[RMDB]
RNA sequence: GGGAACGACUCGAGUAGAGUCGAAAAUUCAAGCGAUUCGUCGCUUGAACCUGAGGAGACUCAAGCAAAAUUGUUCCCUUUUGCUUUUGCAUUCCUCUUUUAAGUAGUAGUGCUUCGGCACUACUAAUAUCGCAUUAGAUUUCGAUCUAAUGCGAUAAAAAGAAACAACAACAACAAC
Reactivity to DMS in 0.01 (KOAc 150mM, MgCl2 10mM, bicine 150mM(pH8.5), 24C), signal-to-noise 4, nucleotides 027 to 126: u000u000c000a000a010g010c000g010a020u000u010c200g010u000c000g020c000u000u000g000a000a070c030c010u000g010a020g000g010a030g010a110c000u000c040a000a000g010c000a000a010a000a020u010u020g000u000u000c000c000c000u000u000u000u000g000c000u000u000u000u000g010c150a100u000u000c000c000u000c010u000u010u010u000a070a170g010u000a000g010u000a010g020u000g010c000u000u010c200g030g010c000a000c000u000a000c000u000a010a090
Reactivity to 2A3 in 0.01 (KOAc 150mM, MgCl2 10mM, bicine 150mM(pH8.5), 24C), signal-to-noise 3, nucleotides 027 to 126: u030u000c000a000a000g000c000g020a020u020u090c160g050u000c000g130c000u000u000g000a010a010c000c000u000g000a010g010g010a010g010a010c000u000c020a000a000g000c000a000a030a060a080u210u290g010u010u020c000c000c000u000u020u000u010g010c000u010u040u010u010g020c020a050u060u000c010c010u040c080u110u110u050u100a140a050g010u020a000g000u000a000g010u010g000c010u040u060c170g050g010c000a000c000u000a000c000u000a010a000
An RNA of 177 nucleotides, treated with DMS and 2A3 and read out base by base. 2A3 adducts were read by reverse transcription with SuperScript II with manganese. The RNA was probed in 150 mM KOAc, 10 mM MgCl2 and 150 mM bicine (pH 8.5) at 24 C. The 2A3 profile rests on 5,311 reads. For DMS, 8,707 sequencing reads were counted.